[RMDB]
RNA sequence: GGGAACGACUCGAGUAGAGUCGAAAAGUAUGACCGCAUCGUGGAUGUGGUAGAAGAGCUGUUCAAAAUCACUCUGCUGCUGAAAGGUCAUACGGAGUACCUUGCCGAUCGCUACAGUGAACGCAAGGGGAUCACAGGGUUUCGACCCUGUGAUCCCAAAAGAAACAACAACAACAAC
Reactivity to 2A3 in 0.01 (KOAc 150mM, MgCl2 10mM, bicine 150mM(pH8.5), 24C), signal-to-noise 1, nucleotides 027 to 126: g000u000a010u020g000a010c000c020g030c060a030u010c040g300u080g190g070a040u040g010u010g000g000u010a000g010a040a020g000a010g000c130u070g050u190u120c090a150a020a070a050u080c010a020c010u000c000u000g020c000u000g100c010u050g120a210a100a000g050g000u000c000a000u000a000c010g000g000a000g010u060a070c000c000u000u020g010c000c040g040a070u050c010g030c070u110a220c060a140g050u000g100a100a010c040g030c090a020a020g070
Reactivity to DMS in 0.01 (KOAc 150mM, MgCl2 10mM, bicine 150mM(pH8.5), 24C), signal-to-noise 1, nucleotides 027 to 126: g000u000a020u000g000a030c000c010g010c020a020u000c100g030u000g040g000a010u020g000u010g000g030u000a000g000a100a050g010a030g000c250u030g010u000u000c170a080a050a110a120u000c000a090c010u000c020u000g040c020u000g000c020u000g040a130a120a250g010g010u000c000a020u000a000c030g030g000a090g000u000a050c000c000u000u000g010c010c040g000a120u000c010g010c120u030a060c220a150g010u000g010a070a120c240g010c000a060a000g000